RNA sequence: GGGAACGACUCGAGUAGAGUCGAAAAAGUGGGCUGCUGGUGGUCGGUACCCCCAGUUCUGCGGGUAAACAGUAAACCAUCUCCAUUUUGGCAUUACGCGUUCUGACAGCACCAAACUUUGUCAGCAAAUCGAUGACUCAUUCGUGAGUCAUCGAUUAAAAGAAACAACAACAACAAC
Reactivity to 2A3 in 0.01 (KOAc 150mM, MgCl2 10mM, bicine 150mM(pH8.5), 24C), signal-to-noise 1, nucleotides 027 to 126: a000g040u040g010g070g040c110u000g000c020u020g080g020u030g030g050u080c020g020g000u030a040c000c000c000c040c020a000g020u220u090c020u060g020c000g000g010g010u020a050a090a050c020a100g020u100a070a020a000c050c010a010u000c020u000c020c010a020u000u100u080u080g020g010c000a010u000u100a110c070g000c050g070u080u020c030u010g010a040c010a000g000c040a010c040c010a000a020a050c070u190u210u080g050u000c010a000g050c010a010
Reactivity to DMS in 0.01 (KOAc 150mM, MgCl2 10mM, bicine 150mM(pH8.5), 24C), signal-to-noise 2, nucleotides 027 to 126: a090g020u000g000g000g040c180u010g010c040u010g040g000u000g010g000u000c020g000g010u020a120c010c020c000c020c020a100g010u000u010c050u000g040c300g000g010g010u010a060a120a060c080a080g040u010a070a050a110c040c040a060u020c060u010c050c080a090u000u000u000u010g000g010c100a090u000u000a060c120g000c040g000u000u000c020u000g000a050c030a080g020c040a080c030c060a070a090a080c120u010u010u000g010u000c050a070g030c300a080